[RMDB]
RNA sequence: GGGAACGACUCGAGUAGAGUCGAAAAGAUAUGGAGUGUUUUACCUCCAGAGUUGUAGGGAGAUACCUCUCGGAAACGAGAGAGUAUCAUCGAUCUACGACUCUGGAGGUAAAACACUCCUAAGUCAUCUUUUACAAAGGUUCGCCUUUGUAAAAGAAAAAGAAACAACAACAACAAC
Reactivity to DMS in 0.01 (KOAc 150mM, MgCl2 10mM, bicine 150mM(pH8.5), 24C), signal-to-noise 1, nucleotides 027 to 126: g000a050u000a300u000g000g000a040g050u000g010u010u000u000u000a010c000c000u000c010c010a020g010a040g040u000u000g030u010a000g030g000g000a050g000a010u000a000c000c000u000c000u000c000g000g010a160a120a300c000g000a000g020a020g010a160g010u010a010u000c030a220u000c140g000a070u000c000u000a010c000g000a010c000u000c000u000g000g000a020g000g000u010a000a000a000a000c000a010c010u000c000c000u000a010a040g010u010c050a170